[RMDB]
RNA sequence: GGGAACGACUCGAGUAGAGUCGAAAAUGACCACCCAGGACGUGGAGGCGAUCACACCGCAGACGUUGAUCAACAUCCGGCCGGUGGUCGCCGCGAUCAAGGAGUUCUUCGGCACCAGCCAGCUGAGCUACACAGCCGGAUUCGUCCGGCUGUGUAGAAAAGAAACAACAACAACAAC
Reactivity to DMS in 0.01 (KOAc 150mM, MgCl2 10mM, bicine 150mM(pH8.5), 24C), signal-to-noise 2, nucleotides 027 to 126: u020g020a090c040c020a120c010c040c100a180g020g010a100c030g010u000g010g000a150g020g020c270g010a050u000c020a010c080a090c040c120g020c160a130g000a120c130g000u000u000g010a060u000c090a100a160c090a080u000c010c030g020g010c040c070g000g020u000g000g010u000c010g000c060c020g010c190g030a080u000c040a010a050g000g000a120g010u000u000c040u020u000c080g020g030c030a060c080c050a090g030c010c080a090g000c010u000g000a080g020